Notes: An RNA of 177 nucleotides, treated with 2A3 and read out base by base. Reactivities are given for positions 27 through 126. The 2A3 profile rests on 383 reads.
RNA sequence: GGGAACGACUCGAGUAGAGUCGAAAAGAAACUGCGGGAAUUAUCUAAUAUUAGAUAAAUUCUAAUCUAAUCGCGAAUAAGAGGUUCUUGAUCUCUUCCGUAGCGGAAAUCUUGAGAUUAGCAAAAAGGGUAACAUUCAGUUCGCUGAAUGUUACCCAAAAGAAACAACAACAACAAC
Reactivity to 2A3 in 0.01 (KOAc 150mM, MgCl2 10mM, bicine 150mM(pH8.5), 24C), signal-to-noise 1, nucleotides 027 to 126: g010a000a080a010c000u000g010c030g030g070g000a000a060u010u000a000u000c000u030a070a030u110a300u300u000a000g010a010u030a050a090a000u060u060c000u000a010a010u040c000u000a030a060u040c010g010c070g030a100a000u040a010a000g000a030g000g010u090u110c100u170u260g110a040u030c000u000c000u060u000c000c020g000u050a010g000c020g030g050a040a040a040u060c080u010u060g020a070g000a050u020u070a000g070c100a050a000a070a100a000